[RMDB]
RNA sequence: GGGAACGACUCGAGUAGAGUCGAAAAGAAAAACGCCAAAAAGCAUUUUAAGUAUGCGGUCUAGGCGGGCAUGUUACCAUGCAAAGUUAUCGACAAUAACUUAGACCAAGUACGAAAGUACAAAAAAGUGAUCAAGUAUGUUCGCAUACUUGAUCACAAAAGAAACAACAACAACAAC
Reactivity to DMS in 0.01 (KOAc 150mM, MgCl2 10mM, bicine 150mM(pH8.5), 24C), signal-to-noise 1, nucleotides 027 to 126: g000a020a040a060a080a090c030g060c000c000a050a020a010a020a030g030c000a030u000u010u000u000a120a130g020u010a010u000g010c040g000g010u010c010u000a080g020g030c000g000g000g010c000a010u000g010u000u010a130c300c010a030u000g000c000a050a020a000g020u000u010a000u010c100g030a090c270a030a060u000a000a000c000u000u000a080g010a010c000c010a010a130g000u010a020c000g000a100a110a110g000u000a010c010a030a060a100a150a060a130
Reactivity to 2A3 in 0.01 (KOAc 150mM, MgCl2 10mM, bicine 150mM(pH8.5), 24C), signal-to-noise 1, nucleotides 027 to 126: g120a020a070a010a010a000c030g000c000c000a010a000a020a010a000g000c000a010u000u150u020u100a110a200g060u040a020u000g000c000g020g000u010c000u010a080g000g020c000g000g010g000c020a010u010g000u150u150a080c100c070a010u000g000c020a000a000a000g010u040u040a050u120c140g140a040c070a010a050u040a010a010c000u000u000a000g010a000c030c000a070a000g000u000a000c000g000a050a080a020g010u030a050c000a000a180a030a000a010a050